[RMDB]
RNA sequence: GGGAACGACUCGAGUAGAGUCGAAAAGGACAGCGCUGCUGCGUACUGCAGAGUGCCGCUGUCCAGCUCCCUGGAUGUGGCCAGCCAGGAUCGGCAGGACGGCAUCCAGUACCGCGUGGGCGUCCACCCACCGACUCUAGUUCGCUAGAGUCGGUGGAAAAGAAACAACAACAACAAC
Reactivity to DMS in 0.01 (KOAc 150mM, MgCl2 10mM, bicine 150mM(pH8.5), 24C), signal-to-noise 2, nucleotides 027 to 126: g000g000a010c000a020g020c020g030c020u030g010c010u000g010c020g000u020a100c290u000g020c030a020g000a080g020u010g030c180c040g000c010u010g000u000c000c000a070g010c070u010c010c050c000u000g010g000a040u000g000u000g010g010c000c000a060g030c000c000a200g010g010a060u000c200g020g010c030a050g010g000a060c030g030g010c000a030u000c000c010a000g000u010a060c100c080g010c160g020u010g020g000g000c090g000u010c030c080a100c140
Reactivity to 2A3 in 0.01 (KOAc 150mM, MgCl2 10mM, bicine 150mM(pH8.5), 24C), signal-to-noise 3, nucleotides 027 to 126: g000g010a000c000a000g000c010g000c020u150g020c010u010g000c020g060u180a250c150u290g000c000a010g030a020g130u090g060c030c040g000c020u020g000u020c010c000a000g010c000u030c010c020c000u010g000g000a010u020g040u060g110g000c030c030a000g000c020c000a100g200g150a300u220c100g010g000c010a020g010g010a070c050g130g000c000a000u000c000c000a000g000u040a130c050c070g050c040g050u180g030g000g010c060g070u050c010c020a070c010